An RNA of 207 nucleotides, treated with 2A3 and read out base by base. 2A3 is a SHAPE reagent: it acylates the 2'-hydroxyl of flexible nucleotides of all four kinds. The reactions ran in a buffer of 150 mM KOAc, 10 mM MgCl2 and 150 mM bicine (pH 8.5), at 24 C. For 2A3 the reverse transcriptase was SuperScript II with manganese. Source: RMDB library M2RFPK, as collected in RNAgym.
[RMDB]
RNA sequence: GGGAACGACUCGAGUAGAGUCGAAAAAGCGUAGCGGUACGCCGCUACGCAAGGCGCAUUUGAACUGUAUUGUACGCCUUGCAUAAAGCAAAAGUACUAAAAAAACAUGCCGUUACGACGGCACGAAAAAACAUCCAUUGGUUCGCCAAUGGAUGAACGCUACAUGUUGGUUCGCCAACAUGUAGCGAAAAGAAACAACAACAACAAC
Reactivity to 2A3 in 0.01 (KOAc 150mM, MgCl2 10mM, bicine 150mM(pH8.5), 24C), signal-to-noise 3, nucleotides 027 to 156: a020g010c000g000u000a000g000c010g000g020u030a040c230g040c030c020g030c000u000a000c010g020c000a000a010g000g000c000g000c020a110u060u080u280g090a120a100c100u110g060u190a120u160u130g030u040a030c010g000c000c020u000u040g000c030a080u140a290a060a000g030c030a030a040a020a030g050u050a030c080u200a080a010a040a030a000a010a030c020a030u040g010c000c000g000u000u040a060c250g010a010c000g060g000c010a020c040g080a070a020a010a000a010a010c010a000u010c000c000a000u000u000g000g010u040u050c070g040c120c000a000a000u000g000g000a000u000g000a000a010